[RMDB]
RNA sequence: GGGAACGACUCGAGUAGAGUCGAAAAGCGUUCACUGGUCGAGAUGGUUUUGCACAAAGGACGUAAGCCGCGGAUCUCACUCACGCGUGAUACAGAACAUACCUUAUGGCCAUUAUAUCUAGUUGCCUCGAAUGCAAACUUUCGAGUUUGCAUUCGAAAAAGAAACAACAACAACAAC
Reactivity to DMS in 0.01 (KOAc 150mM, MgCl2 10mM, bicine 150mM(pH8.5), 24C), signal-to-noise 2, nucleotides 027 to 126: g000c060g000u000u000c030a100c110u000g020g020u010c060g020a160g010a080u010g000g010u000u010u020u010g010c090a060c130a060a080a060g000g000a120c120g000u000a070a070g010c060c000g010c040g000g000a070u030c110u010c110a040c160u000c040a070c050g010c060g000u010g010a090u000a100c070a090g000a090a060c160a090u010a130c060c040u000u010a070u000g000g030c030c040a030u010u000a060u000a060u010c040u010a050g010u010u000g000c060c060
Reactivity to 2A3 in 0.01 (KOAc 150mM, MgCl2 10mM, bicine 150mM(pH8.5), 24C), signal-to-noise 2, nucleotides 027 to 126: g020c010g090u050u080c070a040c100u070g020g080u120c040g020a000g020a170u040g050g050u080u050u110u150g090c060a050c040a150a080a020g030g030a010c060g040u020a100a000g000c030c000g070c000g040g000a040u050c010u000c210a030c080u040c030a130c040g080c000g020u050g020a020u010a060c060a010g110a120a010c020a090u100a060c010c000u030u130a070u060g010g000c000c000a000u030u040a090u040a090u110c130u060a030g050u160u030g010c000c040